Description: Source: RMDB library RNAMAK, as collected in RNAgym. Chemical mapping of a 207-nucleotide RNA with 2A3 and DMS. For 2A3 the reverse transcriptase was SuperScript II with manganese. Conditions: 150 mM KOAc, 10 mM MgCl2 and 150 mM bicine (pH 8.5), 24 C. For DMS the reverse transcriptase was MarathonRT.
RNA sequence: GGGAACGACUCGAGUAGAGUCGAAAAUAGUCCUUUCGAGGACUAAAAAAAUCCUAAGUCGUGAUGAGCUGCAGUAAGAGGUUUCGGAAACGAAACUACCCACCUUACUGAACUACAGCUCGCACGAUAUGGAAAAAAACUGCGUUUCGACGCAGAACAUUACUGAUUUCUUCGGAAAUCAGUAAUGAAAAGAAACAACAACAACAAC
Reactivity to 2A3 in 0.01 (KOAc 150mM, MgCl2 10mM, bicine 150mM(pH8.5), 24C), signal-to-noise 4, nucleotides 027 to 156: u080a010g010u020c010c000u060u040u070c160g060a020g000g000a010c000u020a000a020a000a000a000a000a040u040c020c000u040a100a040g020u000c010g010u020g040a300u060g000a140g000c000u010g010c000a010g000u000a000a000g010a010g020g020u000u000u000c020g010g020a040a070a070c020g000a000a000a000c010u070a110c020c050c010a050c000c010u000u000a000c000u000g020a050a020c070u140a050c030a000g000c000u000c000g000c010a000c000g000a000u010a020u030g000g000a050a070a000a010a060a010a070c010u010g000c000g000u010u080u140c230g040a020c010g000c000a000g010a010a010
Reactivity to DMS in 0.01 (KOAc 150mM, MgCl2 10mM, bicine 150mM(pH8.5), 24C), signal-to-noise 2, nucleotides 027 to 156: u000a040g000u000c000c000u000u010u010c280g040a010g000g020a030c010u010a030a000a010a150a000a030a090u000c000c000u010a090a240g020u010c010g080u000g010a070u000g010a020g010c040u000g010c010a040g010u000a000a010g000a210g030g010u000u000u010c010g010g010a170a090a300c020g030a000a030a010c010u020a000c020c000c040a300c110c000u000u000a020c020u000g010a000a210c010u010a070c000a010g030c000u000c000g010c010a010c000g010a020u010a210u000g050g030a040a000a050a110a100a030a140c000u000g000c000g020u000u000u000c220g010a100c030g010c010a000g000a070a200